[RMDB]
RNA sequence: GGGAACGACUCGAGUAGAGUCGAAAAGAUAUGGAGAAUCAAGACAGAGCCUACAUGAGGUCUACCCACCAUACUCGGAAACGAGUAUGAGGACCUUGGGCGACGAAGUCUUGAUUCUCCUAAGUCAGGUUGACGAUAAGUUCGCUUAUCGUCAACCAAAAGAAACAACAACAACAAC
Reactivity to DMS in 0.01 (KOAc 150mM, MgCl2 10mM, bicine 150mM(pH8.5), 24C), signal-to-noise 2, nucleotides 027 to 126: g000a090u040a300u000g000g020a070g050a020a040u000c000a020a000g020a000c020a060g030a300g000c000c000u000a120c250a200u040g020a020g030g020u000c000u000a080c030c050c020a300c070c010a000u000a000c000u020c010g000g000a030a120a120c000g030a000g000u000a000u000g050a100g000g000a000c000c000u000u000g010g000g030c030g000a150c190g010a220a170g010u000c000u000u000g000a020u000u000c000u000c020c020u020a010a070g020u000c030a020
Reactivity to 2A3 in 0.01 (KOAc 150mM, MgCl2 10mM, bicine 150mM(pH8.5), 24C), signal-to-noise 1, nucleotides 027 to 126: g000a030u120a070u160g030g000a000g030a000a000u040c030a010a010g000a010c070a030g060a000g020c000c050u120a220c180a300u300g130a040g030g020u120c020u090a210c010c040c070a000c030c000a030u010a010c000u010c040g020g030a060a080a020c000g000a000g000u000a010u030g000a020g000g000a000c000c000u030u070g020g010g040c040g080a140c040g050a060a010g000u010c000u010u000g000a000u010u000c020u010c010c020u000a020a000g000u000c080a010